[RMDB]
RNA sequence: GGGAACGACUCGAGUAGAGUCGAAAAACACGGUAUAUGCCCAUCUCUCAUGAUCGCCUUUCACAAAAGAGAAAUUGAAAUUGGUAUAUUUCAGGUAAGUAUUCAUCUUUUUCAGUAUCGAGGCGACGAUCUGUCUUCGUUUCGACGAAGACAGAUCAAAAGAAACAACAACAACAAC
Reactivity to 2A3 in 0.01 (KOAc 150mM, MgCl2 10mM, bicine 150mM(pH8.5), 24C), signal-to-noise 4, nucleotides 027 to 126: a020c140a000c060g050g040u120a150u010a020u160g110c000c000c010a030u030c060u000c010u010c070a130u140g110a240u040c000g020c000c000u070u160u210c140a100c080a100a090a040a030g060a010g000a010a020a030u040u000g010a010a010a040u030u080g130g040u050a060u020a040u110u050u020c030a060g060g110u170a080a070g030u010a120u090u140c100a180u030c050u050u020u000u000u060c040a010g050u030a130u120c040g020a020g010g000c000g010a010c020
Reactivity to DMS in 0.01 (KOAc 150mM, MgCl2 10mM, bicine 150mM(pH8.5), 24C), signal-to-noise 2, nucleotides 027 to 126: a120c030a020c100g000g000u000a050u000a050u000g000c000c010c000a100u010c040u000c070u020c030a090u040g000a100u000c000g050c000c020u010u000u010c180a170c150a060a040a080a070g020a110g000a010a040a000u020u000g000a020a020a010u010u040g010g000u040a000u000a000u000u000u030c000a160g000g050u040a020a080g080u000a090u000u020c190a020u050c010u000u000u000u000u000c050a030g000u000a040u020c140g000a040g000g000c000g000a110c110
Description:
Chemical mapping of a 177-nucleotide RNA with 2A3 and DMS. The data come from the RNA Mapping Database (RMDB), library OK1LIB. Reactivities are given for positions 27 through 126. For DMS the reverse transcriptase was MarathonRT. The reactions ran in a buffer of 150 mM KOAc, 10 mM MgCl2 and 150 mM bicine (pH 8.5), at 24 C.